[RMDB]
RNA sequence: GGGAACGACUCGAGUAGAGUCGAAAACAUGUCACGUGACAUUCUAUAGUGGAUCGGUAUACACCUAUAAUGUGACCGUGCGACGUUGACACGAUGAGGCAUUAAGCGUGACUCAAUGACCUGGAGCGAUUGUUACUGCAUUCGUGCAGUAAUAGUCAAAAGAAACAACAACAACAAC
Reactivity to 2A3 in 0.01 (KOAc 150mM, MgCl2 10mM, bicine 150mM(pH8.5), 24C), signal-to-noise 9, nucleotides 027 to 126: c030a030u070g000u000c000a000c020g030u050g030a020c010a060u050u000c040u050a100u050a080g040u040g050g030a060u060c020g020g020u060a120u030a160c030a020c020c030u080a060u050a250a100u100g020u020g030a020c010c000g010u030g030c040g060a070c060g100u050u080g040a020c010a000c030g020a040u140g040a030g050g000c050a020u020u040a040a000g010c000g010u010g010a010c010u010c030a030a090u070g050a060c000c010u030g060g060a050g050c070
Reactivity to DMS in 0.01 (KOAc 150mM, MgCl2 10mM, bicine 150mM(pH8.5), 24C), signal-to-noise 9, nucleotides 027 to 126: c100a080u000g010u000c010a040c040g010u000g010a130c150a040u000u000c070u000a070u000a150g020u000g000g000a080u000c030g010g010u000a070u010a080c030a020c050c060u010a080u010a070a160u000g010u000g000a040c030c020g020u000g010c080g010a070c100g010u000u010g010a130c040a030c040g010a100u000g000a050g000g000c080a030u000u000a080a200g010c070g010u000g000a050c020u000c110a060a090u000g000a120c030c010u000g010g010a110g010c180
The record gives the reactivity of an RNA of 177 nucleotides to 2A3 and DMS. DMS adducts were read by reverse transcription with MarathonRT. The data come from the RNA Mapping Database (RMDB), library OK2TRN. The DMS profile rests on 167,649 reads. The 2A3 profile rests on 157,207 reads. For 2A3 the reverse transcriptase was SuperScript II with manganese.